[RMDB]
An RNA of 207 nucleotides, treated with 2A3 and DMS and read out base by base. The 2A3 profile rests on 2,205 reads. For DMS, 1,850 sequencing reads were counted. For 2A3 the reverse transcriptase was SuperScript II with manganese.
RNA sequence: GGGAACGACUCGAGUAGAGUCGAAAACAUAGAAUCUUCGGAUUCUAUGAAAAAAUCCUAAGUCUCCGAAGAACGUGCAAUCGCGAGGAUCUCGGAAACGAGGGAGCGAGCACGGGAGGAGAUAUGGAAAAAAGUCAGUCCGUUCGCGGACUGACAAGGUAUAGGUAGAGUUCGCUCUACCUAUACCAAAAGAAACAACAACAACAAC
Reactivity to 2A3 in 0.01 (KOAc 150mM, MgCl2 10mM, bicine 150mM(pH8.5), 24C), signal-to-noise 3, nucleotides 027 to 156: c000a000u010a000g000a010a000u010c010u060u070c260g060g000a000u000u000c000u000a010u010g000a020a000a000a000a000a010u060c030c000u040a110a020g000u000c000u010c010c020g220a280a020g010a080a020c000g000u010g000c040a230a300u030c010g000c000g030a150g030g010a010u000c000u020c020g070g020a160a060a060c010g000a010g010g000g000a000g000c010g000a040g130c010a000c000g000g000g010a010g000g010a000g000a000u050a050u030g060g020a100a040a030a080a040a000g010u050c000a000g000u040c030c030g010u050u080c300g000c020g080g000a000c000u010g000a000c000a000a040
Reactivity to DMS in 0.01 (KOAc 150mM, MgCl2 10mM, bicine 150mM(pH8.5), 24C), signal-to-noise 1, nucleotides 027 to 156: c010a030u000a000g000a020a030u020c000u000u070c300g040g010a010u000u000c000u000a010u000g010a010a000a050a110a090a170u010c000c020u000a050a170g000u000c010u000c000c000g000a170a190g010a110a210c030g000u010g000c000a130a190u000c020g020c000g000a060g010g010a020u010c000u000c010g000g030a130a060a200c020g040a020g000g050g030a050g020c000g020a110g010c020a010c020g030g020g000a090g000g000a010g010a020u000a090u000g050g000a000a100a050a130a100a170g020u000c020a040g000u000c000c000g000u000u000c300g050c020g030g010a060c000u000g000a010c000a010a020